RNA sequence: GGGAACGACUCGAGUAGAGUCGAAAAAUCAUACUGGAUAGUAGAAUGAGGUGUCACGGUCUCUGCUAUCUAGUAUGAGCACCACAGGUAGACUAGAUUGUGAUACCUCAUGUCUAUCCGUGGUAAAGUAUCAGUAUGUAUUCGUACAUGCUGAUACAAAAGAAACAACAACAACAAC
Reactivity to 2A3 in 0.01 (KOAc 150mM, MgCl2 10mM, bicine 150mM(pH8.5), 24C), signal-to-noise 9, nucleotides 027 to 126: a000u060c010a010u030a040c020u050g000g000a000u000a000g040u010a020g080a200a030u030g000a000g020g020u040g020u040c020a000c020g020g010u000c010u000c010u020g010c000u000a000u000c000u000a000g000u000a010u030g000a000g010c010a020c010c000a010c000a000g000g000u000a000g000a020c000u000a010g000a020u010u030g010u010g020a010u020a020c000c000u000c000a010u030g020u000c000u000a000u000c000c000g030u020g000g010u040a030a040a000
Reactivity to DMS in 0.01 (KOAc 150mM, MgCl2 10mM, bicine 150mM(pH8.5), 24C), signal-to-noise 8, nucleotides 027 to 126: a080u030c060a070u010a050c080u020g000g000a010u000a010g010u030a080g010a090a020u000g000a020g000g010u000g000u010c020a030c030g000g000u000c010u000c100u000g000c000u000a000u000c000u000a080g030u010a020u020g000a060g000c040a050c070c040a040c020a020g000g000u000a000g000a050c030u000a030g000a010u000u000g010u000g000a040u010a020c020c010u000c000a020u000g000u010c000u000a000u000c010c010g010u010g010g010u010a030a080a100